[RMDB]
RNA sequence: GGGAACGACUCGAGUAGAGUCGAAAAUCGCUGGUGGAGACAAGAUUCUGCCGCUGGCCAGAAGGUAAUCGCGCAGGACUUUGGUGAAGGUGAAAUCGCGCCGUCCACCAUGAUUGUCACUGGCCCAUGUACACAGCGUGUUCGCACGCUGUGUACAAAAAGAAACAACAACAACAAC
Reactivity to 2A3 in 0.01 (KOAc 150mM, MgCl2 10mM, bicine 150mM(pH8.5), 24C), signal-to-noise 1, nucleotides 027 to 126: u010c000g010c030u080g000g010u020g030g050a060g020a080c090a120a030g010a170u000u050c010u000g030c010c030g000c040u010g070g000c000c010a190g090a300a100g050g040u080a040a070u050c030g000c000g000c130a070g000g050a030c010u100u120u060g000g000u080g080a160a130g080g000u080g100a140a070a110u170c080g000c030g000c180c010g040u000c010c000a000c000c000a020u070g020a010u020u060g100u020c030a010c110u050g040g010c030c010c000a060
Reactivity to DMS in 0.01 (KOAc 150mM, MgCl2 10mM, bicine 150mM(pH8.5), 24C), signal-to-noise 2, nucleotides 027 to 126: u010c050g010c180u000g030g020u000g000g000a140g020a100c060a050a060g000a090u010u000c020u000g040c040c010g020c150u000g030g000c000c020a090g000a040a050g010g030u000a050a040u000c030g010c110g000c090a140g000g000a030c010u000u000u010g000g010u000g020a120a120g000g030u000g000a060a080a090u010c190g040c150g010c020c000g000u020c040c010a080c040c010a010u000g010a020u000u010g010u040c060a150c120u000g000g010c000c020c130a080